[RMDB]
Overview: Structure probing data (2A3) for a 207-nucleotide construct. It was measured as part of the RMDB library OK3TST. The RNA was probed in 150 mM KOAc, 10 mM MgCl2 and 150 mM bicine (pH 8.5) at 24 C.
RNA sequence: GGGAACGACUCGAGUAGAGUCGAAAACAAGAUUUACUUGAUCGACAACAAGUCGGCCGACAUCGCUUCUCUAAACUACCAAAACGAUCACAGCAACUUUCUGACCAGCGUAGUCCAAAAUAGCGACUUUACGCCUCAAGAGGCCAGCACUCAGACCUCUAUCGGCGAUUUUCGAAUCGCCGAUAGAAAAAGAAACAACAACAACAAC
Reactivity to 2A3 in 0.01 (KOAc 150mM, MgCl2 10mM, bicine 150mM(pH8.5), 24C), signal-to-noise 1, nucleotides 027 to 156: c020a020a010g010a050u070u190u270a100c000u060u080g020a090u040c040g000a000c030a190a040c020a040a030g030u040c040g040g030c020c000g000a010c000a130u030c050g030c010u020u020c070u030c000u000a080a150a040c000u030a120c110c050a170a120a060a060c070g060a060u090c160a000c030a050g170c020a000a150c070u110u160u050c020u100g000a020c050c000a000g020c000g040u020a010g000u000c000c000a100a100a300a100u080a110g060c100g040a000c000u110u060u070a010c010g000c050c000u060c000a070a070g010a040g030g040c000c010a040g000c000a010c020u060c070a080g020a160c030c030